An RNA of 177 nucleotides, treated with DMS and read out base by base.
For DMS the reverse transcriptase was MarathonRT.
[RMDB]
RNA sequence: GGGAACGACUCGAGUAGAGUCGAAAAGGUUGAUUUGCAUUUGAAGUGUUUAUCCCGCUGCGAGAUAAACACGGUCGUGAAAUAAAAAAUACGCAGUGGAGGGUUGAAUUUUAAAACCGCUUUUUAGCCAAGGUCUAUUUUUCGAAAUAGACCUUGGAAAAGAAACAACAACAACAAC
Reactivity to DMS in 0.01 (KOAc 150mM, MgCl2 10mM, bicine 150mM(pH8.5), 24C), signal-to-noise 2, nucleotides 027 to 126: g020g020u000u000g010a120u000u010u010g020c050a060u010u000u000g020a120a180g010u000g000u000u000u000a010u010c000c030c120g000c030u000g020c020g010a110g000a020u000a000a010a010c000a000c000g020g010u000c140g010u010g000a090a100a090u040a020a050a100a070a050a040u010a060c050g010c030a020g020u000g000g000a080g000g010g020u010u000g010a110a100u020u020u000u010a060a040a070a090c090c050g010c090u010u010u000u010u010a090g000